[RMDB]
RNA sequence: GGGAACGACUCGAGUAGAGUCGAAAACAGCAACCAUUCAUAUGUGUUCGAUGUCCCAAUGCGGAAUUGGCGACUUCACCUGCUCUAUCGGUUUAGUGGCAAAUCUUCUUUAGUUGGUUGCCAUUCAGAUUUAGGUCGACUUCGGUCGACCUAAAUCAAAAGAAACAACAACAACAAC
Reactivity to 2A3 in 0.01 (KOAc 150mM, MgCl2 10mM, bicine 150mM(pH8.5), 24C), signal-to-noise 2, nucleotides 027 to 126: c030a010g030c080a020a110c000c000a050u130u210c100a030u130a070u300g160u000g090u070u050c030g000a020u000g050u030c070c000c070a020a030u130g000c100g100g010a070a020u030u050g020g030c030g010a020c010u000u000c070a100c040c000u000g000c000u080c020u060a080u130c000g140g000u080u050u210a060g020u040g060g000c000a000a000a220u100c040u180u080c040u110u050u200a120g010u020u040g010g000u040u000g000c010c000a000u050u130c010a010